[RMDB]
This 207-nucleotide RNA was probed chemically with 2A3 and DMS. Values cover nucleotides 27 to 156. Source: RMDB library RSTRND, as collected in RNAgym. The reactions ran in a buffer of 150 mM KOAc, 10 mM MgCl2 and 150 mM bicine (pH 8.5), at 24 C. For 2A3, 4,398 sequencing reads were counted.
RNA sequence: GGGAACGACUCGAGUAGAGUCGAAAAACUCAAACUGCGGGAAACCCCUAAAGCCUUCACUACCAAGCUUGUGUUUCGAAAGGACAUGGUGGCCAGGUUAAUUGCCUCGGGUACGGUCACAACGUGAAGGAUGUUCCAAUGGGCAAUCCGCAGCCAACCUACUUCUCAUGUUCGCAUGAGAAGUAGGAAAAGAAACAACAACAACAAC
Reactivity to 2A3 in 0.01 (KOAc 150mM, MgCl2 10mM, bicine 150mM(pH8.5), 24C), signal-to-noise 4, nucleotides 027 to 156: a000c020u010c030a040a010a020c000u000g000c010g010g000g030a060a080a100c020c000c000c010u040a050a030a040g000c000c000u000u000c000a000c020u030a010c030c090a000a010g030c030u250u240g090u030g050u070u070u200c040g070a090a020a030g010g010a010c000a010u030g030g000u080g020g000c000c000a010g000g000u050u040a050a020u070u100g000c020c010u080c200g020g000g010u060a140c040g000g000u010c010a010c010a060a000c030g000u000g000a000a000g000g000a000u020g060u160u090c030c000a030a020u040g000g000g020c010a010a090u020c000c010g000c000a000g000c000c010a020a040
Reactivity to DMS in 0.01 (KOAc 150mM, MgCl2 10mM, bicine 150mM(pH8.5), 24C), signal-to-noise 1, nucleotides 027 to 156: a090c010u010c020a090a050a030c160u000g060c000g050g010g000a130a160a070c120c020c020c050u000a080a110a300g000c020c000u000u000c040a070c000u010a110c020c040a110a210g000c010u000u010g040u000g000u000u000u000c040g040a080a120a270g000g030a040c030a070u000g000g030u000g010g000c000c000a060g010g000u010u000a080a060u010u010g000c000c020u010c080g140g160g010u010a030c120g040g000u010c030a070c080a050a040c110g050u000g010a060a040g000g000a080u000g010u040u000c020c070a020a140u010g000g000g030c000a060a300u000c020c000g020c000a000g000c000c030a050a140